This 177-nucleotide RNA was probed chemically with 2A3. It was measured as part of the RMDB library OK1LIB. 2A3 adducts were read by reverse transcription with SuperScript II with manganese.

[RMDB]
RNA sequence: GGGAACGACUCGAGUAGAGUCGAAAAUUACCUGCUAUUUAGUGAUGUUCUCAGCUAUUUUGUUCAGGAAUCGUGCCCUAUUUUGGAUGAGUUAUGUGACUGUUCGAAUCUUUGGGACGUAGAGAACGCUGCAUGCGGUAUUCGUACCGCAUGCAGCAAAAGAAACAACAACAACAAC
Reactivity to 2A3 in 0.01 (KOAc 150mM, MgCl2 10mM, bicine 150mM(pH8.5), 24C), signal-to-noise 2, nucleotides 027 to 126: u000u060a270c000c000u010g050c010u020a050u110u040u090a060g030u010g110a110u120g000u020u010c050u020c000a040g000c000u020a100u040u090u010u240g150u120u090c030a030g170g000a080a100u080c000g010u230g160c000c000c000u000a000u040u060u120u040g000g100a030u190g240a140g060u130u000a110u300g190u300g090a030c010u000g000u000u010c000g010a000a070u100c230u230u090u040g000g000g000a000c040g000u000a010g050a000g000a150a030c020